[RMDB]
RNA sequence: GGGAACGACUCGAGUAGAGUCGAAAAACUGAUACCUUACGAGGUAUCAGAAUGACUUCGUGGUAGAGCGCCACGAACGGAAAAUAAAGAAAGCUCGAUUGAAACGCACCGUGUACGCACGGUGCGAGCCACAUGGAGACUUCGGUCUCCAUGUGGCAAAAGAAACAACAACAACAAC
Reactivity to 2A3 in 0.01 (KOAc 150mM, MgCl2 10mM, bicine 150mM(pH8.5), 24C), signal-to-noise 1, nucleotides 027 to 126: a010c000u000g020a010u000a000c000c000u030u030a110c300g080a040g000g000u000a040u000c000a000g000a010a010u050g150a100c010u000u000c000g000u000g000g050u130a190g040a000g000c020g000c000c000a030c020g000a000a000c030g080g040a050a020a000a000u150a050a170a020g260a000a010a000g010c020u000c010g110a140u020u260g020a080a040a000c000g000c000a000c000c010g020u000g000u020a060c300g000c020a000c010g000g000u010g000c000g000a000